[RMDB]
An RNA of 177 nucleotides, treated with 2A3 and DMS and read out base by base.
The DMS profile rests on 1,854 reads.
The reactions ran in a buffer of 150 mM KOAc, 10 mM MgCl2 and 150 mM bicine (pH 8.5), at 24 C.
RNA sequence: GGGAACGACUCGAGUAGAGUCGAAAAGAUAUGGAGGCACGAAGAACACGAAUCUGACGGUCGGAAACGACCGCAGACUAUGGGAGUGCCUCCUAAGUCAAAAUCAGGAAGGUUCGCCUUCCUGAAAGGUAAUGAAUCUCUUCGGAGAUUCAUUACCAAAAGAAACAACAACAACAAC
Reactivity to 2A3 in 0.01 (KOAc 150mM, MgCl2 10mM, bicine 150mM(pH8.5), 24C), signal-to-noise 3, nucleotides 027 to 126: g010a020u010a000u060g000g010a000g010g040c030a010c060g120a170a180g080a280a040c190a040c140g190a160a210u000c010u020g130a190c010g000g010u020c000g000g000a020a010a000c000g010a000c010c000g000c010a010g010a000c030u200a250u160g000g000g050a110g000u000g000c000c000u000c000c000u010a000a000g000u010c000a000a000a010a240u050c000a000g000g020a000a000g030g050u080u150c240g180c050c000u010u000c000c000u000g000a030a000a010
Reactivity to DMS in 0.01 (KOAc 150mM, MgCl2 10mM, bicine 150mM(pH8.5), 24C), signal-to-noise 2, nucleotides 027 to 126: g010a010u000a140u010g000g000a010g010g030c000a020c000g000a180a140g050a130a150c110a060c210g000a060a150u000c000u000g000a120c000g000g010u010c000g030g000a010a010a040c000g010a000c000c010g010c000a000g010a020c140u010a030u020g000g000g000a190g010u000g010c010c000u000c000c000u000a010a040g000u000c030a110a070a090a130u010c010a000g000g010a010a020g000g000u000u010c140g010c010c000u000u000c000c000u000g010a000a010a040